[RMDB]
RNA sequence: GGGAACGACUCGAGUAGAGUCGAAAAGCUGUCUCCCCAGCCCGUCCCCCACAGCGGCUCCAGUGGCUACGGGAGUCUGGGCAGCAACGGGUCCCACGAGCACCUUAUGAGCCAGACCUCCUCCAGCACAUACUAGGCGUUUCGACGCCUAGUAUGUAAAAGAAACAACAACAACAAC
Reactivity to DMS in 0.01 (KOAc 150mM, MgCl2 10mM, bicine 150mM(pH8.5), 24C), signal-to-noise 2, nucleotides 027 to 126: g030c030u010g000u010c060u000c050c000c020c050a060g000c030c040c040g000u000c000c000c010c010c050a090c150a090g030c090g010g020c030u020c040c070a140g000u000g010g010c060u000a070c090g000g000g020a100g030u000c030u000g000g000g020c030a070g010c070a070a100c110g010g020g010u000c040c020c030a110c100g020a100g010c050a080c070c030u000u000a110u010g000a080g000c000c030a090g000a140c040c010u000c010c010u010c050c050a080g020c160
This 177-nucleotide RNA was probed chemically with DMS.
Values cover nucleotides 27 to 126.
The data come from the RNA Mapping Database (RMDB), library OK2TST.